Record summary: An RNA of 177 nucleotides, treated with 2A3 and DMS and read out base by base. 2A3 adducts were read by reverse transcription with SuperScript II with manganese. For DMS, 2,029 sequencing reads were counted.

RNA sequence: GGGAACGACUCGAGUAGAGUCGAAAAGAUAUGGAACCGGUGGUUGCCAACAGCAUAGAUCGGAAACGAUCUAUGACAUGGCAUCACCCGGUUCCUAAGUCAAAACCAAUGCGUUCGCGCAUUGGAAGAGUGAUUCUAGGUUCGCCUAGAAUCACUCAAAAGAAACAACAACAACAAC
Reactivity to 2A3 in 0.01 (KOAc 150mM, MgCl2 10mM, bicine 150mM(pH8.5), 24C), signal-to-noise 2, nucleotides 027 to 126: g020a000u070a040u110g000g000a010a000c010c000g020g030u070g010g050u080u100g000c000c030a100a060c090a190g020c000a010u000a000g000a010u010c010g060g000a060a010a050c020g000a010u000c000u000a010u010g030a030c000a060u040g020g000c000a000u000c010a020c020c000c000g000g000u000u010c000c000u000a020a010g020u000c030a000a030a060a190c000c000a000a000u000g000c000g020u040u110c300g000c010g000c170a010u000u010g000g010a060a050
Reactivity to DMS in 0.01 (KOAc 150mM, MgCl2 10mM, bicine 150mM(pH8.5), 24C), signal-to-noise 3, nucleotides 027 to 126: g000a020u000a300u000g000g000a020a000c000c000g010g040u000g010g010u000u000g010c000c000a000a080c250a200g020c010a000u000a000g000a000u010c000g000g000a180a070a270c010g010a000u000c000u000a000u000g000a090c070a170u000g020g040c000a000u000c010a060c060c000c000g000g010u000u000c000c000u010a010a100g000u000c040a170a050a170a170c000c000a010a000u000g000c000g010u000u020c300g030c010g020c000a010u000u000g000g000a030a040